[RMDB]
This 207-nucleotide RNA was probed chemically with DMS and 2A3. Values cover nucleotides 27 to 156. Reactivities are rounded to 0.1 and cut off at 0 and 3. Source: RMDB library PDB130, as collected in RNAgym.
RNA sequence: GGGAACGACUCGAGUAGAGUCGAAAAAUAGAUCCUGAAACCGUGUGCCUACAACAAGUCAAAGCUCGUUAAUGAGUGAUGGCGUGCCUUUUGUAGAAUGAACCGGCGAGUUACGAUUGCAUGCGAGGUUAAGUCGAAGAGACGGAGCCGCAGCGAACUCCUUGCUUAACUUCGGUUAAGCAAGGAGAAAAGAAACAACAACAACAAC
Reactivity to DMS in 0.01 (KOAc 150mM, MgCl2 10mM, bicine 150mM(pH8.5), 24C), signal-to-noise 1, nucleotides 027 to 156: a110u000a050g030a070u000c000c010u000g000a270a150a160c040c020g040u000g010u000g000c010c010u000a090c000a040a040c000a020a000g040u000c010a000a080a300g000c000u020c050g030u020u000a080a220u010g000a010g000u000g020a300u000g000g000c020g030u000g030c040c020u000u000u000u000g010u000a020g000a080a130u000g040a040a050c020c000g010g040c050g010a090g000u000u010a070c100g000a080u000u000g010c010a150u000g010c060g040a020g020g000u000u030a130a220g030u000c000g000a120a140g010a300g010a050c060g000g010a210g000c010c010g000c000a160g000c110g000a080a210
Reactivity to 2A3 in 0.01 (KOAc 150mM, MgCl2 10mM, bicine 150mM(pH8.5), 24C), signal-to-noise 2, nucleotides 027 to 156: a000u210a030g100a110u060c030c000u060g090a080a040a020c030c030g150u140g030u050g210c020c020u000a010c000a030a000c010a010a060g010u020c010a070a000a000g000c050u020c010g140u300u300a180a160u300g010a000g020u010g000a060u090g020g020c060g010u010g060c010c010u000u130u060u070g020u000a030g100a110a040u090g020a020a040c010c000g030g000c020g030a050g020u150u080a020c060g010a100u090u220g060c080a110u050g020c030g060a070g060g030u080u120a030a020g020u010c050g000a070a090g050a060g010a160c000g000g030a000g020c000c020g000c060a030g000c010g010a050a010
As a SHAPE reagent, 2A3 marks flexible, mostly unpaired nucleotides at the ribose 2'-OH.